[RMDB]
RNA sequence: GGGAACGACUCGAGUAGAGUCGAAAAGAAGAGUAUAUCCUACGGGAAUCCCCCGGUCCCUCUCACGUCCAGCCCCUCCCCGUGUCUAGUGAAGGGAGACUCCGGGACUCCUUGCAUGCUGGGGACGCAAACUUUACCUUCGGGUAAAGUAAAAGAAACAACAACAACAAC
Reactivity to DMS in 0.01 (KOAc 150mM, MgCl2 10mM, bicine 150mM(pH8.5), 24C), signal-to-noise 9, nucleotides 027 to 129: g000a020a010g020a030g000u010a040u030a070u030c010c020u010a060c130g030g010g040a070a130u050c060c030c000c020c000g000g020u030c030c000c010u020c060u020c010a070c070g020u010c060c040a110g030c020c000c010c010u000c010c000c010c010g050u000g000u030c050u020a080g010u010g000a100a060g000g010g050a040g000a030c050u030c070c120g000g010g000a070c050u000c020c040u000u010g020c090a050u040g020c010u000g010g010g020g010a000c040g040c120a070a080
Reactivity to 2A3 in 0.01 (KOAc 150mM, MgCl2 10mM, bicine 150mM(pH8.5), 24C), signal-to-noise 9, nucleotides 027 to 129: g060a040a010g050a010g070u080a030u020a050u220c020c010u020a050c080g020g000g020a020a120u090c010c000c000c000c000g010g010u030c010c000c000u040c000u030c010a040c010g110u040c020c020a030g020c030c000c000c000u030c010c010c000c000g060u070g070u030c030u040a070g030u030g140a070a030g010g030g000a030g020a000c020u010c040c020g010g000g030a030c000u010c000c000u010u060g050c030a050u100g000c000u040g000g000g010g020a010c000g010c040a090a100